[RMDB]
RNA sequence: GGGAACGACUCGAGUAGAGUCGAAAAGAUAUGGACGAACAGUCUGCGUGACUAUCUCGGAAACGAGCCGAGGUCACGAACUACAGACGUUCGUCCUAAGUCAAAGUCCCCACUUCGGUGGGGACAAGGUGAUUCUCUUGUUCGCAAGAGAAUCACCAAAAGAAACAACAACAACAAC
Reactivity to DMS in 0.01 (KOAc 150mM, MgCl2 10mM, bicine 150mM(pH8.5), 24C), signal-to-noise 1, nucleotides 027 to 126: g000a020u010a300u030g000g000a000c050g000a020a010c010a170g040u000c000u000g010c000g040u000g010a010c010u000a140u000c000u000c000g000g020a070a090a190c080g040a110g000c120c070g020a090g040g010u000c000a000c000g000a050a020c070u000a300c020a000g000a000c000g030u000u000c000g000u000c000c000u000a020a050g000u000c040a130a170a150g000u000c000c000c000c000a050c000u000u010c070g080g030u000g000g000g000g000a000c000a000a010
Reactivity to 2A3 in 0.01 (KOAc 150mM, MgCl2 10mM, bicine 150mM(pH8.5), 24C), signal-to-noise 1, nucleotides 027 to 126: g040a020u070a000u160g000g000a000c010g010a010a010c060a120g000u000c000u000g020c000g000u000g010a000c000u020a140u300c020u000c020g040g070a240a300a180c100g110a180g130c060c020g110a050g000g020u010c000a010c010g020a010a050c080u210a020c040a010g010a000c000g000u000u000c000g000u050c000c000u000a020a000g010u010c010a040a080a000g000u000c020c010c000c000a010c020u020u070c290g060g000u000g000g000g000g000a010c010a000a010